The data come from the RNA Mapping Database (RMDB), library OK1LIB. This 177-nucleotide RNA was probed chemically with DMS and 2A3. The 2A3 profile rests on 2,483 reads. The RNA was probed in 150 mM KOAc, 10 mM MgCl2 and 150 mM bicine (pH 8.5) at 24 C. The DMS profile rests on 1,744 reads.
RNA sequence: GGGAACGACUCGAGUAGAGUCGAAAAAUUUAACUGCCAGGACGGUCACCUUUGGGGUGGUGACAAGUGUGAUCACUUGGGUGGUGGCUGUGUUUGCGUCUCUCCCAGGAAUCUCGUUUACCAGAUCGAUGGAUGAUCAGUUCGCUGAUCAUCCAUCAAAAGAAACAACAACAACAAC
Reactivity to DMS in 0.01 (KOAc 150mM, MgCl2 10mM, bicine 150mM(pH8.5), 24C), signal-to-noise 1, nucleotides 027 to 126: a030u080u100u010a000a050c160u000g020c000c000a040g000g010a020c180g000g000u000c000a000c000c070u000u020u040g000g060g000g000u000g020g010u000g010a110c000a140a030g020u020g000u040g000a120u020c020a030c000u000u000g000g020g010u020g000g000u000g020g030c010u000g050u050g000u000u000u020g000c090g080u020c040u010c050u000c000c000c130a170g000g000a130a010u010c090u000c090g000u040u040u010a140c050c000a050g000a050u040c140
Reactivity to 2A3 in 0.01 (KOAc 150mM, MgCl2 10mM, bicine 150mM(pH8.5), 24C), signal-to-noise 3, nucleotides 027 to 126: a000u190u150u060a090a040c020u040g000c000c010a010g010g060a000c020g040g010u030c010a010c000c000u090u100u150g080g030g000g010u020g010g020u020g020a020c000a000a120g160u160g020u020g140a050u180c020a000c000u010u040g080g030g000u050g010g050u000g010g000c030u030g020u020g070u070u080u070g030c040g030u000c020u000c010u000c050c030c000a030g000g040a010a040u030c020u010c050g040u030u040u010a140c010c000a030g000a120u130c080